Source: RMDB library TTRINS, as collected in RNAgym. This 177-nucleotide RNA was probed chemically with 2A3 and DMS. The reactions ran in a buffer of 150 mM KOAc, 10 mM MgCl2 and 150 mM bicine (pH 8.5), at 24 C.

[RMDB]
RNA sequence: GGGAACGACUCGAGUAGAGUCGAAAAGAUAUGGAUGAAGCAGAGGAGCCUGUUAGCGAUGAAAUAUGUUUAUCGGAAACGAUAAACAUAUGGAGCUAACGGCUCCGACGAAGCUUCAUCCUAAGUCCGUUACAUUUGGGUUCGCCCAAAUGUAACGAAAAGAAACAACAACAACAAC
Reactivity to 2A3 in 0.01 (KOAc 150mM, MgCl2 10mM, bicine 150mM(pH8.5), 24C), signal-to-noise 1, nucleotides 027 to 126: g050a040u130a110u300g010g010a000u010g000a020a040g020c010a010g050a040g130g020a000g010c010c230u300g170u050u000a000g000c040g210a300u050g000a040a000a080u000a010u000g000u040u020u010a020u020c020g050g030a150a070a030c010g000a030u000a010a000a010c030a000u000a000u000g000g010a020g000c000u000a010a010c000g000g010c000u050c000c000g020a010c000g000a040a050g000c000u020u000c000a010u020c010c000u000a070a030g070u040c030
Reactivity to DMS in 0.01 (KOAc 150mM, MgCl2 10mM, bicine 150mM(pH8.5), 24C), signal-to-noise 1, nucleotides 027 to 126: g010a080u010a300u000g050g000a040u010g000a010a040g000c010a080g010a210g000g000a020g010c000c000u000g010u000u000a000g020c020g000a110u010g000a090a090a000u000a000u010g010u000u000u000a000u000c020g000g000a190a090a200c000g010a000u000a000a020a000c000a000u000a000u010g010g000a060g010c000u000a020a030c000g020g000c010u000c000c000g000a070c190g000a130a110g000c010u000u000c000a000u000c000c000u000a020a080g000u000c040